[RMDB]
RNA sequence: GGGAACGACUCGAGUAGAGUCGAAAAGAUAUGGAUCAUCAAGGGAGCUGCUCGGAAACGAGGCAGCGAGGAUCUUGAUGAUCCUAAGUCAAAGUCAAUAUCGCGGGUUCGCCCGCGAUAUUGACAAGCUAUGCAUCUUCUUCGGAAGAUGCAUAGCAAAAGAAACAACAACAACAAC
Reactivity to DMS in 0.01 (KOAc 150mM, MgCl2 10mM, bicine 150mM(pH8.5), 24C), signal-to-noise 2, nucleotides 027 to 126: g000a030u000a300u000g000g010a000u010c000a000u000c000a000a000g000g000g010a030g010c000u000g000c000u000c000g000g000a080a110a160c000g010a070g030g000c000a000g000c010g020a040g000g010a010u000c000u000u010g000a000u000g000a000u010c000c000u000a020a060g000u010c050a040a130a150g000u010c000a020a000u000a010u000c010g000c010g000g010g000u010u010c300g030c030c000c000g010c000g010a000u000a000u000u010g010a000c020a040a020
Reactivity to 2A3 in 0.01 (KOAc 150mM, MgCl2 10mM, bicine 150mM(pH8.5), 24C), signal-to-noise 2, nucleotides 027 to 126: g050a010u080a030u180g010g000a010u000c000a000u000c000a010a020g020g000g000a020g000c000u010g020c020u020c030g000g050a070a100a070c030g020a050g300g070c000a000g000c020g010a040g000g000a010u000c000u010u010g000a000u010g000a010u000c000c010u000a010a030g000u000c020a100a080a000g000u000c000a010a000u000a010u000c000g000c030g000g040g070u100u080c300g150c020c000c000g010c000g000a000u000a000u000u010g010a000c020a000a000

Annotation:
This 177-nucleotide RNA was probed chemically with DMS and 2A3. For DMS the reverse transcriptase was MarathonRT. For DMS, 1,966 sequencing reads were counted. For 2A3 the reverse transcriptase was SuperScript II with manganese. The data come from the RNA Mapping Database (RMDB), library TTRDEL.